[RMDB]
RNA sequence: GGGAACGACUCGAGUAGAGUCGAAAACUUCAGUGUGUCUCUAUUGCCGUGCGCAUAUAGAACAUCCUGAUGUCUCUGGUGUUUGUAAAUAUAAGGGUAAGUUUGUCCAAAUCCCUGCUCAGUGUGUGAACGUCCCACUUCGGUGGGACGAAAAGAAACAACAACAACAAC
Reactivity to 2A3 in 0.01 (KOAc 150mM, MgCl2 10mM, bicine 150mM(pH8.5), 24C), signal-to-noise 2, nucleotides 027 to 129: c000u000u000c000a000g000u000g010u000g000u000c000u050c010u120a020u000u010g000c000c010g160u060g050c160g000c000a040u060a080u000a080g020a080a050c000a000u020c010c010u040g020a000u040g080u000c000u000c020u040g050g000u000g170u000u220u210g080u060a080a040a070u060a140u130a010a020g060g000g000u020a090a060g000u010u120u000g030u030c000c040a040a080a030u200c150c000c000u000g030c040u000c030a040g000u000g020u000g000u020g000a020a190
Reactivity to DMS in 0.01 (KOAc 150mM, MgCl2 10mM, bicine 150mM(pH8.5), 24C), signal-to-noise 4, nucleotides 027 to 129: c080u000u030c010a010g010u020g060u030g030u020c140u010c020u030a000u020u020g000c020c050g000u030g010c180g010c030a020u070a040u030a010g000a000a100c030a050u030c190c010u010g000a000u040g040u020c050u030c020u060g010g050u030g030u030u030u030g030u050a010a070a050u030a080u030a100a130g010g010g040u000a090a070g020u010u030u020g010u040c050c060a100a130a120u070c040c000c000u010g030c130u030c030a010g050u030g000u020g040u010g000a050a080
An RNA of 170 nucleotides, treated with 2A3 and DMS and read out base by base. For DMS the reverse transcriptase was MarathonRT. The reactions ran in a buffer of 150 mM KOAc, 10 mM MgCl2 and 150 mM bicine (pH 8.5), at 24 C. Source: RMDB library 15KLIB, as collected in RNAgym.